Chemical mapping of a 177-nucleotide RNA with DMS and 2A3. The reactions ran in a buffer of 150 mM KOAc, 10 mM MgCl2 and 150 mM bicine (pH 8.5), at 24 C.

[RMDB]
RNA sequence: GGGAACGACUCGAGUAGAGUCGAAAAGUCGCACCUACCGAUUGGAUAUUGUGACGAACCUUGCAGAGUGAGUUCUAUUCAGCAAUGGAUAGUAUUUACGAAGUCAUGUAAAUCGUAAUAUCUAGAGCCUAAUGGCACUGUUCGCAGUGCCAUUAGGAAAAGAAACAACAACAACAAC
Reactivity to DMS in 0.01 (KOAc 150mM, MgCl2 10mM, bicine 150mM(pH8.5), 24C), signal-to-noise 2, nucleotides 027 to 126: g010u010c040g040c090a180c040c010u010a120c140c070g030a100u000u030g020g000a040u000a040u010u000g040u010g000a040c040g010a150a190c180c040u000u000g010c030a040g000a300g030u000g000a010g040u000u000c000u010a000u000u000c010a000g030c300a090a090u010g000g040a040u000a000g010u000a040u000u000u030a010c030g000a240a180g000u000c060a030u000g000u010a040a180a080u000c000g010u000a000a030u000a010u010c010u000a050g000a080g000
Reactivity to 2A3 in 0.01 (KOAc 150mM, MgCl2 10mM, bicine 150mM(pH8.5), 24C), signal-to-noise 1, nucleotides 027 to 126: g050u020c040g000c070a090c020c000u090a070c030c050g100a090u080u080g000g000a000u000a010u010u010g010u010g020a010c010g000a040a090c000c020u000u020g000c040a010g060a010g060u010g000a000g000u030u000c010u000a000u000u000c000a000g030c060a070a130u010g010g020a010u000a010g000u010a000u000u000u000a010c010g020a020a010g080u140c020a020u010g030u030a000a000a060u000c000g010u000a020a000u000a010u000c050u060a050g030a030g170